RNA sequence: GGGAACGACUCGAGUAGAGUCGAAAACGUACGUGGAGACACGUACGACGAGACUUCGGUCUCGAAUCGCAUGAACUCGCGCCAUGCGCGCGCGAGGCGUCGGUGGUCGGCGAGCCCACGGACGCAAAAACUCGCGCGUAAAUAAAUAGCGUGGGAAGGUAAUGAUGCAUUUCGAUGCAUCAUUACCAAAAGAAACAACAACAACAAC
Reactivity to 2A3 in 0.01 (KOAc 150mM, MgCl2 10mM, bicine 150mM(pH8.5), 24C), signal-to-noise 2, nucleotides 027 to 156: c010g000u000a000c000g000u000g000g020a060g010a030c000a000c020g000u000a000c000g000a010c020g000a000g000a000c010u100u180c300g080g010u000c000u010c000g000a060a080u110c010g000c000a000u010g010a100a150c010u000c000g000c000g000c000c000a010u010g000c010g000c000g000c000g000c000g030a000g010g000c000g000u000c050g180g000u000g020g000u020c020g060g150c210g040a030g010c000c010c000a000c030g100g000a000c000g000c000a000a000a020a120a130c010u010c000g000c000g000c000g000u030a010a010a010u180a020a080a060u240a020g000c000g010u010g000g010g000a030a070
Reactivity to DMS in 0.01 (KOAc 150mM, MgCl2 10mM, bicine 150mM(pH8.5), 24C), signal-to-noise 1, nucleotides 027 to 156: c030g070u000a010c000g000u000g020g000a300g010a300c000a000c010g050u000a000c000g030a100c060g050a300g010a050c000u000u000c210g000g000u000c000u010c090g010a030a100u030c050g010c060a030u000g000a080a120c000u000c010g020c000g020c000c010a050u010g020c090g000c030g020c000g000c000g000a040g020g000c020g020u000c010g020g020u000g000g020u010c030g020g000c190g030a300g040c250c000c010a020c010g000g020a060c000g030c180a010a010a030a070a300c010u010c000g000c000g000c000g030u010a100a020a130u000a090a060a170u010a060g000c010g040u020g000g040g020a080a150